[RMDB]
The record gives the reactivity of an RNA of 177 nucleotides to 2A3. Reactivities are given for positions 27 through 126. The RNA was probed in 150 mM KOAc, 10 mM MgCl2 and 150 mM bicine (pH 8.5) at 24 C.

RNA sequence: GGGAACGACUCGAGUAGAGUCGAAAACGCUUUAUUCACUGGGGUCGACAACUCUGGGGAGAAAAGGGAGGAUCGGCUGGGAAGAGUAUAUCCUAUGGGAAUCCGUGGUUUCCCCUCACGUCCAGCCCACACGACUUAUGUUCGCAUAAGUCGUGUGAAAAGAAACAACAACAACAAC
Reactivity to 2A3 in 0.01 (KOAc 150mM, MgCl2 10mM, bicine 150mM(pH8.5), 24C), signal-to-noise 1, nucleotides 027 to 126: c030g050c040u010u130u100a110u070u130c050a070c190u030g030g010g000g060u050c080g170a100c060a080a030c000u030c030u080g040g020g000g000a130g060a030a130a010a060g070g030g030a040g030g060a080u080c030g000g000c040u020g020g000g000a030a050g010a030g100u080a030u010a020u150c000c010u070a130u190g040g030g040a030a060u080c040c060g050u070g000g030u020u050u000c000c000c000c000u040c000a000c020g000u000c000c000a000g000c020c000